Notes: Structure probing data (DMS and 2A3) for a 177-nucleotide construct. DMS adducts were read by reverse transcription with MarathonRT. For 2A3, 1,149 sequencing reads were counted. It was measured as part of the RMDB library OK2TRN. The RNA was probed in 150 mM KOAc, 10 mM MgCl2 and 150 mM bicine (pH 8.5) at 24 C.
RNA sequence: GGGAACGACUCGAGUAGAGUCGAAAAAGGUGCCCCUGACCUGUCCGCCUUUCAGGGUGCGCUUACGGCCGUCAGCACUGAUUAACUGAAGGUUAACCAGUUCGCCGCUGUCGUCAUACAGUGGCACUGCUGCACUUUCAUUCGUGAAAGUGCAGCAAAAAGAAACAACAACAACAAC
Reactivity to DMS in 0.01 (KOAc 150mM, MgCl2 10mM, bicine 150mM(pH8.5), 24C), signal-to-noise 1, nucleotides 027 to 126: a060g000g000u000g010c050c030c030c020u000g000a030c090c000u020g000u000c060c030g030c080c010u010u020u000c020a010g000g000g000u000g010c040g000c000u020u000a050c090g030g000c010c050g000u000c080a100g010c110a130c040u010g000a060u000u000a020a030c030u020g000a140a060g050g020u010u010a030a060c020c000a040g000u000u000c140g020c000c010g000c010u000g020u000c130g030u030c200a090u000a080c020a010g010u000g020g030c000a080c140
Reactivity to 2A3 in 0.01 (KOAc 150mM, MgCl2 10mM, bicine 150mM(pH8.5), 24C), signal-to-noise 1, nucleotides 027 to 126: a000g000g020u010g000c000c000c020c000u010g040a050c010c020u040g040u030c030c040g000c060c010u030u190u010c000a020g000g000g050u040g020c000g020c000u050u090a030c080g080g020c030c010g060u040c050a020g010c080a010c030u040g040a110u150u090a060a050c000u100g180a100a010g080g020u030u020a000a020c000c000a020g040u050u100c070g000c030c000g000c000u030g010u020c030g070u030c010a040u160a170c010a020g000u020g000g000c000a000c020